[RMDB]
RNA sequence: GGGAACGACUCGAGUAGAGUCGAAAAGCUGAUUUGUGUAUAGGUUGGAUACACAAUCAGGUUCGAAGAUUUAUCACAUCCAACACGCACCAGGAUAAAGUACAUGACGGAUGGAAUGCUUUUCCGAGAAACCAUGAUGGAUCCAUUACUGAGCAAGGAUCGGCAUGGCAUUCGUGCCAUGCCGAUCAAAAGAAACAACAACAACAAC
Reactivity to 2A3 in 0.01 (KOAc 150mM, MgCl2 10mM, bicine 150mM(pH8.5), 24C), signal-to-noise 1, nucleotides 027 to 156: g110c000u000g030a020u150u170u250g060u000g000u000a050u070a070g030g010u000u010g020g000a000u000a000c000a000c000a000a000u010c000a010g030g000u040u170c050g120a120a040g050a170u060u200u130a030u190c070a050c000a040u050c000c000a050a000c040a070c070g020c050a120c070c000a050g010g000a040u050a130a120a000g030u070a020c010a030u130g000a130c070g030g030a020u050g010g110a070a060u090g040c020u140u110u000u010c010c010g110a070g130a100a000a000c030c000a000u040g010a030u090g010g000a040u010c010c000a020u090u120a090c030u050g010a050g060c090a050a030g240
This 207-nucleotide RNA was probed chemically with 2A3.
The reactions ran in a buffer of 150 mM KOAc, 10 mM MgCl2 and 150 mM bicine (pH 8.5), at 24 C.